An RNA of 207 nucleotides, treated with DMS and 2A3 and read out base by base.
[RMDB]
RNA sequence: GGGAACGACUCGAGUAGAGUCGAAAAGUUGAAGUUGAAGGUUAUCAGUGAAAGGGCUGAUUUGAAAUAAAGGCUGAAAGUUAUAGCAAGAGUAAUUAGGAAAGAGGGGGGCCGGGCAUGGUGGCUCACACCUGUAAUCCCAGCACUUUGGGAGGCCAAGAGAACGAUAGUUCGCUAUCGUUCUCUUAAAAGAAACAACAACAACAAC
Reactivity to DMS in 0.01 (KOAc 150mM, MgCl2 10mM, bicine 150mM(pH8.5), 24C), signal-to-noise 1, nucleotides 027 to 156: g000u000u010g010a020a300g000u000u000g010a090a150g010g030u000u000a060u000c020a080g010u010g000a050a120a210g020g010g040c010u000g020a030u000u010u000g030a110a100a060u000a100a070a110g000g040c060u000g030a080a050a170g000u000u010a060u000a100g010c040a070a120g010a090g030u020a020a020u000u000a090g030g030a060a080a080g000a110g010g000g060g030g060g050c050c100g010g050g040c020a070u010g000g010u000g020g000c110u010c110a060c020a030c040c030u000g000u000a040a150u000c010c010c010a130g030c090a090c110u000u000u000g010g020g040a050g010g000c110c090
Reactivity to 2A3 in 0.01 (KOAc 150mM, MgCl2 10mM, bicine 150mM(pH8.5), 24C), signal-to-noise 1, nucleotides 027 to 156: g000u000u000g070a090a010g030u080u000g010a010a010g040g020u050u030a100u060c010a020g030u040g130a300a000a000g030g000g000c010u050g050a060u100u040u110g070a000a000a000u060a020a070a000g050g010c000u020g060a120a090a000g020u130u080a090u150a110g120c040a010a020g000a020g080u050a170a090u070u140a040g000g030a140a000a030g000a130g000g000g000g000g020g000c100c090g000g000g030c010a000u080g040g000u060g000g030c090u110c070a060c000a030c020c000u010g050u110a030a100u020c010c000c000a010g040c090a140c060u150u100u010g000g000g000a010g020g060c060c020
For 2A3 the reverse transcriptase was SuperScript II with manganese.